[RMDB]
RNA sequence: GGGAACGACUCGAGUAGAGUCGAAAAGAGAGUUUUGGAGCUGUGCCGAUCUCCUUCCAUGGUAUCAUUCAAACUUACCGGUGUCUUCCAGGAGAUCAUUGGGAUCGGAUCGCCUUCGGCUUCACAAAACGAUGAGCAACUUCGGUUGCUCAUCGUUAAAAGAAACAACAACAACAAC
Reactivity to 2A3 in 0.01 (KOAc 150mM, MgCl2 10mM, bicine 150mM(pH8.5), 24C), signal-to-noise 3, nucleotides 027 to 126: g140a000g000a000g060u080u110u130u210g070g000a030g000c040u000g040u090g000c000c000g000a000u010c040u100c030c000u120u000c080c020a090u180g000g020u030a020u090c020a060u150u270c170a140a180a120c100u240u130a100c120c030g040g010u060g050u000c050u090u000c060c050a070g040g050a010g010a100u050c050a060u030u200g040g020g000a020u000c000g000g000a010u100c080g110c020c050u060u010c000g010g000c000u060u030c040a000c030a060a170
Reactivity to DMS in 0.01 (KOAc 150mM, MgCl2 10mM, bicine 150mM(pH8.5), 24C), signal-to-noise 2, nucleotides 027 to 126: g000a070g000a050g030u030u000u000u000g000g000a050g000c000u000g020u010g010c230c030g000a000u000c000u000c090c170u050u030c000c010a120u000g020g000u000a010u010c090a110u050u120c200a070a100a080c220u000u030a030c010c080g000g000u000g030u010c100u010u010c060c300a270g050g020a090g000a000u030c120a050u060u000g000g030g010a010u000c160g010g000a070u010c080g000c150c030u110u000c060g000g030c000u000u000c050a100c300a050a000
An RNA of 177 nucleotides, treated with 2A3 and DMS and read out base by base. The RNA was probed in 150 mM KOAc, 10 mM MgCl2 and 150 mM bicine (pH 8.5) at 24 C. It was measured as part of the RMDB library OK1LIB. As a SHAPE reagent, 2A3 marks flexible, mostly unpaired nucleotides at the ribose 2'-OH.